[RMDB]
The record gives the reactivity of an RNA of 177 nucleotides to DMS and 2A3. Values cover nucleotides 27 to 126. 2A3 adducts were read by reverse transcription with SuperScript II with manganese.

RNA sequence: GGGAACGACUCGAGUAGAGUCGAAAACGUGCUCAGCAGCAGACCAACCUUUGUUCAAGUCUAUGGAGCAGACGCUUCUGCACAGCAACAGUCAAUUCAGCCGAACAUGGUGAUGGGAAAAAUGCCAGAAUGAAAGAUCCUUCGGGAUCUUUCAUUCAAAAGAAACAACAACAACAAC
Reactivity to DMS in 0.01 (KOAc 150mM, MgCl2 10mM, bicine 150mM(pH8.5), 24C), signal-to-noise 3, nucleotides 027 to 126: c200g010u010g010c030u000c080a100g000c090a050g000c040a080g000a170c030c020a060a100c060c040u020u000u020g030u000u020c070a040a130g030u020c100u000a110u020g000g000a060g000c030a090g000a070c150g000c070u000u000c030u010g020c080a070c110a090g010c090a130a070c170a110g000u020c100a090a100u020u000c060a110g000c000c030g000a030a090c090a110u050g000g030u010g030a050u010g000g010g010a010a020a080a080a070u040g000c000c070a180
Reactivity to 2A3 in 0.01 (KOAc 150mM, MgCl2 10mM, bicine 150mM(pH8.5), 24C), signal-to-noise 5, nucleotides 027 to 126: c030g030u070g020c000u040c040a060g000c010a020g010c010a010g060a060c010c010a020a050c000c030u090u080u190g040u040u030c050a090a110g040u010c020u080a120u140g050g010a020g000c020a010g060a050c090g010c070u090u000c010u090g040c020a030c000a140g040c010a050a080c000a070g100u040c020a030a080u130u080c020a050g040c030c040g050a050a050c040a100u090g040g000u050g030a110u060g040g030g000a040a070a030a010a020u110g010c020c000a020